The record gives the reactivity of an RNA of 177 nucleotides to 2A3 and DMS. The RNA was probed in 150 mM KOAc, 10 mM MgCl2 and 150 mM bicine (pH 8.5) at 24 C. 2A3 adducts were read by reverse transcription with SuperScript II with manganese. The data come from the RNA Mapping Database (RMDB), library OK2TRN.
[RMDB]
RNA sequence: GGGAACGACUCGAGUAGAGUCGAAAAUAUUCUCAGACCAUCUUGAGCAAUCUAUGAGUGGUAAGGUUUUUCAGGUUUGCUCUGAGACACCUGAUGACCUGCUGGAUGAUGUUGAAAUACAGGGACAAUUUAAUCAUGGGUUCGCCCAUGAUUAAAUAAAAGAAACAACAACAACAAC
Reactivity to 2A3 in 0.01 (KOAc 150mM, MgCl2 10mM, bicine 150mM(pH8.5), 24C), signal-to-noise 2, nucleotides 027 to 126: u080a010u050u030c010u000c010a010g070a030c030c030a030u040c020u050u090g030a010g030c010a040a120u060c030u090a100u190g070a040g110u040g040g000u040a060a060g010g000u010u000u020u040u050c010a010g000g040u070u150u150g050c040u040c040u090g040a060g030a040c030a010c060c010u000g010a020u020g020a010c000c000u020g060c030u020g050g060a070u060g000a000u080g060u110u070g090a140a140a030u120a050c030a010g040g000g040a030c050a110
Reactivity to DMS in 0.01 (KOAc 150mM, MgCl2 10mM, bicine 150mM(pH8.5), 24C), signal-to-noise 7, nucleotides 027 to 126: u020a180u000u010c010u000c010a170g010a090c050c030a020u000c030u000u000g000a040g000c110a090a070u000c050u000a070u010g010a110g040u000g010g000u000a120a040g010g010u000u000u010u010u000c000a010g010g000u000u000u010g020c090u000c090u010g010a100g020a080c150a040c010c000u000g000a060u000g000a050c020c000u000g000c100u000g000g010a080u000g000a080u000g010u000u000g010a060a070a090u000a060c080a030g010g000g010a110c160a070